[RMDB]
RNA sequence: GGGAACGACUCGAGUAGAGUCGAAAAGAUAUGGACACAGAACUACAAACAAACUCCUUUGAUCUCGGAAACGAGGGAGGAGGUAGUUUGCUGUGUCCUAAGUCAAACAGCUCCUUCGGGAGCUGAAUCGUAUCUUCAACUUCGGUUGAAGAUACGAAAAAGAAACAACAACAACAAC
Reactivity to 2A3 in 0.01 (KOAc 150mM, MgCl2 10mM, bicine 150mM(pH8.5), 24C), signal-to-noise 2, nucleotides 027 to 126: g010a000u100a020u140g000g020a010c010a000c000a020g130a140a060c110u230a040c220a010a140a000c020a110a290a020c000u010c000c010u250u280u120g140a130u060c000u000c000g040g070a090a130a130c010g000a010g000g000g040a030g020g010a000g050g000u000a020g010u000u020u090g040c010u000g010u010g010u000c000c010u000a020a010g010u020c010a010a110a120c000a000g000c010u020c010c000u070u090c300g100g000g000a030g000c000u000g020a000a040
Reactivity to DMS in 0.01 (KOAc 150mM, MgCl2 10mM, bicine 150mM(pH8.5), 24C), signal-to-noise 2, nucleotides 027 to 126: g000a040u000a300u020g000g010a010c000a020c000a000g000a080a060c080u030a210c000a020a050a030c040a040a210a300c000u000c000c000u000u030u030g000a080u010c000u000c000g000g020a100a060a080c020g000a000g000g040g000a010g000g000a000g010g000u000a100g000u000u000u000g000c010u000g010u000g010u000c010c000u010a000a050g010u000c020a130a280a230c010a000g020c000u000c000c000u000u000c260g000g000g000a010g000c020u000g000a040a060